[RMDB]
This 207-nucleotide RNA was probed chemically with 2A3 and DMS. Values are in units of 0.01, from 0 to 300, in steps of 10. The RNA was probed in 150 mM KOAc, 10 mM MgCl2 and 150 mM bicine (pH 8.5) at 24 C. Source: RMDB library OK3TST, as collected in RNAgym. The DMS profile rests on 1,448 reads. DMS adducts were read by reverse transcription with MarathonRT.
RNA sequence: GGGAACGACUCGAGUAGAGUCGAAAAAAGAGCAAGAUUGUUAAGCUCUCAAAGCUGGAUUGCUUACGGUGGUAAUGUAGCUGAUUACUUAGACAUGACAGGCAAGAUUGAUGAGGUUGGAGCUGCACAGAUUUAUCCAACUUGGAACGGUGGUGGACGUAGUCGCUCAUUUCGAUGAGCGACUACGAAAAGAAACAACAACAACAAC
Reactivity to 2A3 in 0.01 (KOAc 150mM, MgCl2 10mM, bicine 150mM(pH8.5), 24C), signal-to-noise 2, nucleotides 027 to 156: a010a000g020a020g000c060a140a010g030a140u010u030g120u060u050a070a010g050c000u000c000u000c060a100a090a000g000c010u040g020g060a070u000u090g060c000u100u020a110c100g060g080u060g000g010u040a070a030u070g090u140a020g010c000u010g050a100u070u030a030c030u060u040a020g050a030c050a050u170g010a040c050a060g040g010c040a090a040g040a140u080u160g090a090u050g050a050g070g030u100u080g000g040a020g000c000u060g040c110a070c030a120g070a020u010u070u130a060u100c000c030a000a070c060u030u080g040g030a090a040c010g060g010u010g000g080u040g010g030a000
Reactivity to DMS in 0.01 (KOAc 150mM, MgCl2 10mM, bicine 150mM(pH8.5), 24C), signal-to-noise 1, nucleotides 027 to 156: a010a050g030a070g030c010a170a130g060a150u000u000g000u020u010a070a300g020c010u010c000u000c100a080a080a110g020c020u010g020g030a090u010u010g000c020u010u000a110c150g040g100u000g060g020u000a000a100u020g010u020a060g000c040u020g020a140u000u000a060c050u000u000a070g030a040c060a050u030g020a120c130a100g050g060c000a060a130g000a160u030u010g000a120u000g020a030g000g000u000u010g000g020a180g000c030u000g000c080a120c180a070g010a230u020u010u040a060u020c050c060a010a050c060u000u000g000g000a070a020c060g040g040u000g000g000u000g010g000a180